[RMDB]
Chemical mapping of a 177-nucleotide RNA with DMS and 2A3. For 2A3, 2,056 sequencing reads were counted. Conditions: 150 mM KOAc, 10 mM MgCl2 and 150 mM bicine (pH 8.5), 24 C. For 2A3 the reverse transcriptase was SuperScript II with manganese.

RNA sequence: GGGAACGACUCGAGUAGAGUCGAAAAAAACUAACAAGGAUUCCGUCAGUAACGGCGAGUGAAGACGGAGUAGCCCAAGGUUCAAUCCUGGAUCUCUUCGAGGUCAGGAGAUUUAACCUAAGGACUGACCGUCUGUACGAUUCGUCGUACAGACGGUAAAAGAAACAACAACAACAAC
Reactivity to DMS in 0.01 (KOAc 150mM, MgCl2 10mM, bicine 150mM(pH8.5), 24C), signal-to-noise 2, nucleotides 027 to 126: a020a050a050c110u060a020a090c150a120a050g000g020a130u030u020c000c000g040u000c060a090g000u060a130a020c010g040g030c190g000a220g010u010g030a060a060g000a010c020g000g000a030g000u020a010g010c010c010c040a180a050g000g000u000u000c190a040a000u000c000c010u060g000g000a000u010c000u000c020u020u020c300g030a010g000g000u000c000a040g000g000a180g000a160u040u010u020a020a010c000c000u000a170a170g020g000a070c040u000g000
Reactivity to 2A3 in 0.01 (KOAc 150mM, MgCl2 10mM, bicine 150mM(pH8.5), 24C), signal-to-noise 3, nucleotides 027 to 126: a000a000a000c130u210a100a030c130a140a080g110g000a050u060u000c000c000g000u000c020a020g080u050a060a030c010g040g050c130g060a010g010u030g040a110a000g040a000c000g010g020a000g000u000a000g010c000c000c000a030a040g020g000u000u020c010a000a000u020c000c010u020g090g050a030u010c010u010c010u150u300c260g050a030g000g020u000c000a000g000g030a090g000a000u010u000u000a010a020c000c020u010a000a090g020g030a020c020u030g050